[RMDB]
RNA sequence: GGGAACGACUCGAGUAGAGUCGAAAAGGGGUCUUUCUCCAUACAGAGGUCCUCUAAGACAGCUGAAGCCUCCACGGCAAUGACGGAGGACUACCCACCUGUAUGAAGAGAAAGACGGAGGCACCCAAAGCAGGUGUUGCUUCGGCAACACCUGCAAGCUAGUAAGAUACUUCGGUAUCUUACUAGCAAAAGAAACAACAACAACAAC
Reactivity to 2A3 in 0.01 (KOAc 150mM, MgCl2 10mM, bicine 150mM(pH8.5), 24C), signal-to-noise 1, nucleotides 027 to 156: g010g030g000g000u000c020u000u000u000c000u030c000c000a000u000a010c000a000g000a000g020g000u010c030c010u000c010u080a180a100g140a070c090a050g050c020u030g020a120a000g000c000c000u020c010c030a050c010g000g050c050a040a210u220g120a050c150g020g000a010g000g000a000c010u010a020c020c030c050a100c000c000u000g010u000a000u010g050a170a060g000a010g010a010a000a010g000a000c000g000g000a010g000g060c000a030c020c020c020a140a040a000g020c000a000g000g000u010g010u010u000g000c000u080u180c240g080g020c000a000a000c000a010c000c000u000g000c000a000a010
Structure probing data (2A3) for a 207-nucleotide construct. Source: RMDB library RNAMAK, as collected in RNAgym. The RNA was probed in 150 mM KOAc, 10 mM MgCl2 and 150 mM bicine (pH 8.5) at 24 C.